This 207-nucleotide RNA was probed chemically with 2A3 and DMS. The RNA was probed in 150 mM KOAc, 10 mM MgCl2 and 150 mM bicine (pH 8.5) at 24 C.

[RMDB]
RNA sequence: GGGAACGACUCGAGUAGAGUCGAAAAGGAGGUUGGGAAGAAGAGUCUUGGUUAUACCUAAAUGAGGUAAAUUCUUACAUGCUUGAUACAAUGCUUUGUGAUGGCAUGUUGUUAAAUAAACCUGGAGGAACAUCAUCAGGUGAUGCCACUACUGCACCGAAGGAUACGUUUUCGAACGUAUCCUUCGAAAAGAAACAACAACAACAAC
Reactivity to 2A3 in 0.01 (KOAc 150mM, MgCl2 10mM, bicine 150mM(pH8.5), 24C), signal-to-noise 4, nucleotides 027 to 156: g040g020a030g010g020u130u140g020g000g010a060a010g010a020a010g010a030g020u030c030u050u050g020g030u120u090a110u070a110c030c020u070a130a150a130u170g060a070g050g000u030a070a060a130u120u060c040u050u060a010c010a010u000g010c000u020u030g020a010u060a230c030a080a070u160g110c100u200u140u030g040u060g020a080u010g000g000c010a000u000g000u010u010g000u000u120a130a170a120u130a060a060a000c010c010u020g050g000a040g010g040a050a000c010a080u050c000a010u030c020a010g010g000u030g030a030u030g000c020c010a040c040u120a030c030u040g000c070a040c000
Reactivity to DMS in 0.01 (KOAc 150mM, MgCl2 10mM, bicine 150mM(pH8.5), 24C), signal-to-noise 2, nucleotides 027 to 156: g000g010a050g000g010u000u010g000g000g020a130a090g010a040a080g020a100g050u010c020u000u010g020g030u020u000a150u000a080c020c020u000a120a080a080u000g030a110g020g000u010a060a170a140u020u000c060u000u000a080c010a030u000g010c040u000u000g020a300u020a110c070a050a080u000g030c120u000u000u000g030u010g010a300u000g020g000c010a060u000g020u000u010g000u000u010a010a070a110u000a030a100a070c010c010u010g040g020a130g030g010a060a090c050a030u000c030a050u000c070a080g060g030u000g020a040u000g010c000c020a090c060u020a090c060u000g000c060a120c020
Reactivities are given for positions 27 through 156. DMS adducts were read by reverse transcription with MarathonRT. 2A3 adducts were read by reverse transcription with SuperScript II with manganese.